[RMDB]
RNA sequence: GGGAACGACUCGAGUAGAGUCGAAAAUAGGCGAUCGUACGCUAGGGUACACGUACGCGAUCAGGAUCGAUCCUCAGCGCAUAGUCGAUCGCUAGGAUCUGCUGAUCUCUAGCAUGCAUGGAUCCUACGAAUGCGUAAGGUUCGCCUUACGCAUUCGAAAAGAAACAACAACAACAAC
Reactivity to 2A3 in 0.01 (KOAc 150mM, MgCl2 10mM, bicine 150mM(pH8.5), 24C), signal-to-noise 4, nucleotides 027 to 126: u160a000g040g000c020g040a040u010c040g060u040a010c020g030c030u020a020g050g010g020u070a020c080a010c080g040u070a030c100g020c040g040a020u020c020a010g020g070a090u140c040g000a020u000c010c010u050c130a010g000c020g000c050a070u110a130g210u130c080g140a140u090c010g000c010u000a000g000g000a000u000c020u080g000c020u010g020a010u000c030u000c000u040a030g000c010a030u080g000c000a020u050g030g030a040u050c020c000u010a060
Reactivity to DMS in 0.01 (KOAc 150mM, MgCl2 10mM, bicine 150mM(pH8.5), 24C), signal-to-noise 5, nucleotides 027 to 126: u010a030g020g010c020g010a070u000c060g020u000a030c050g010c040u000a020g020g010g020u000a040c050a090c160g000u000a030c040g030c140g000a040u000c030a030g000g000a120u000c220g000a040u010c010c010u000c170a030g010c040g020c250a070u000a120g020u020c220g000a100u010c020g010c000u000a010g000g000a010u000c000u000g010c030u000g010a030u000c000u010c120u010a100g000c030a080u000g010c000a090u000g000g000a050u010c000c010u010a100

Conditions: 150 mM KOAc, 10 mM MgCl2 and 150 mM bicine (pH 8.5), 24 C.
An RNA of 177 nucleotides, treated with 2A3 and DMS and read out base by base.
For DMS the reverse transcriptase was MarathonRT.
DMS (dimethyl sulfate) methylates the pairing face of unpaired adenines and cytosines.
Source: RMDB library OK2TRN, as collected in RNAgym.